Source information:
Structure probing data (2A3) for a 207-nucleotide construct. For 2A3 the reverse transcriptase was SuperScript II with manganese. The RNA was probed in 150 mM KOAc, 10 mM MgCl2 and 150 mM bicine (pH 8.5) at 24 C.
RNA sequence: GGGAACGACUCGAGUAGAGUCGAAAAGGAGGAAGGAUGUCGAAACCGAGAGGUCCUGAGGAAUCGCUUUUUAGAGUUUGACUAACAGAUUGUGUUAGUGUUUACAGCCAGCGUAAACAACUCUUCAGAAACCUCAGGCGACAGUGACGCUGGCUAACGAACAACAAUAAUUCGUUAUUGUUGUUCGAAAAGAAACAACAACAACAAC
Reactivity to 2A3 in 0.01 (KOAc 150mM, MgCl2 10mM, bicine 150mM(pH8.5), 24C), signal-to-noise 2, nucleotides 027 to 156: g050g000a010g030g020a030a030g000g030a050u060g060u070c020g020a130a030a040c030c050g010a000g010a020g060g000u020c000c000u000g000a000g000g010a020a030u030c010g040c060u100u070u080u190u290a010g000a020g000u000u010u110g100a030c010u010a010a010c010a150g130a300u190u150g100u020g000u100u020a020g000u020g010u040u020u020a010c000a010g020c000c020a010g010c010g000u020a000a020a000c010a000a000c000u000c000u100u090c050a030g010a020a020a020c000c000u000c010a000g000g000c010g000a020c000a040g080u130g190a020c130g000c030u000g000g000c000u000a200a040